[RMDB]
RNA sequence: GGGAACGACUCGAGUAGAGUCGAAAAAUACUUCUCAGGAUGGCGCGUUGCAGUCCAACAAGAUCCAGGGACUGUACAGAAUUUUCCUAUACCACGAGUCGGGUUUGGAAUCUAAGGUUGACUCGCUAAAACUUUACGUGGUUCGCCACGUAAAGAACUUGUUUAACAUGUUCGCAUGUUAAACAAGAAAAGAAACAACAACAACAAC
Reactivity to DMS in 0.01 (KOAc 150mM, MgCl2 10mM, bicine 150mM(pH8.5), 24C), signal-to-noise 3, nucleotides 027 to 156: a090u000a040c070u000u010c020u000c020a160g010g030a090u010g000g030c070g030c100g030u000u000g030c010a050g020u000c020c010a100a200c030a090a170g010a070u000c040c040a200g010g000g000a040c040u000g000u010a110c080a150g030a110a080u010u000u000u000c010c010u000a120u000a090c010c050a050c030g000a040g040u010c040g030g020g040u000u000u010g010g010a070a080u000c080u000a100a110g020g020u000u000g010a050c030u000c020g010c040u020a050a030a120a100c000u000u000u000a000c010g020u000g000g020u000u000c300g020c010c000a010c010g000u000a000a010a020g010a020a100
Reactivity to 2A3 in 0.01 (KOAc 150mM, MgCl2 10mM, bicine 150mM(pH8.5), 24C), signal-to-noise 5, nucleotides 027 to 156: a000u070a040c040u050u040c020u010c040a020g090g030a110u100g060g050c030g000c050g080u090u050g000c010a010g000u000c010c010a040a050c060a120a120g100a170u100c080c060a040g020g000g000a000c000u000g010u020a020c010a020g200a170a060u040u020u010u030c000c000u030a040u060a090c000c020a040c070g010a000g010u010c010g020g030g000u030u050u040g030g010a030a020u020c020u080a150a050g130g010u070u120g030a010c000u030c020g000c020u060a090a080a020a080c000u000u010u000a000c000g000u000g000g030u020u030c140g030c040c000a000c000g000u000a000a000a000g000a000a010